[RMDB]
This 177-nucleotide RNA was probed chemically with 2A3 and DMS.
It was measured as part of the RMDB library RFMREP.
Conditions: 150 mM KOAc, 10 mM MgCl2 and 150 mM bicine (pH 8.5), 24 C.
Values are in units of 0.01, from 0 to 300, in steps of 10.
RNA sequence: GGGAACGACUCGAGUAGAGUCGAAAAGCAAUGUUUCUUGCUCAAAUGAGUAUUCCAAGUCGCACCAGCAAAUGUCAAAAUGCAAACUAAUGCAUAUUUUGGUGCUUGUUUUUGCCAUGCUAAUUUGCACUUUCAACCAGUUCGCUGGUUGAAAGUGAAAAGAAACAACAACAACAAC
Reactivity to 2A3 in 0.01 (KOAc 150mM, MgCl2 10mM, bicine 150mM(pH8.5), 24C), signal-to-noise 1, nucleotides 027 to 126: g000c010a020a120u070g030u020u020u000c010u000u010g000c020u020c090a030a040a060u110g000a000g040u010a050u080u060c020c000a010a030g090u120c040g030c020a020c030c010a030g000c030a000a010a030u030g000u030c030a060a020a000a000u030g000c000a060a060a060c090u130a240a060u020g020c020a030u020a100u050u040u020u010g000g010u000g020c010u000u010g000u020u000u000u030u030g000c040c010a000u100g000c020u040a070a040u020u010u050g040
Reactivity to DMS in 0.01 (KOAc 150mM, MgCl2 10mM, bicine 150mM(pH8.5), 24C), signal-to-noise 1, nucleotides 027 to 126: g000c050a060a120u010g030u000u020u000c030u000u000g030c080u000c030a040a040a060u020g010a020g030u000a070u000u000c030c000a080a100g010u000c150g010c030a040c060c030a010g010c050a040a040a080u000g030u010c120a060a120a040a060u000g000c030a010a060a110c220u030a100a090u000g000c010a000u000a110u000u000u000u000g010g030u000g010c100u000u010g000u000u000u000u000u000g000c000c080a070u000g000c040u000a070a060u000u000u020g000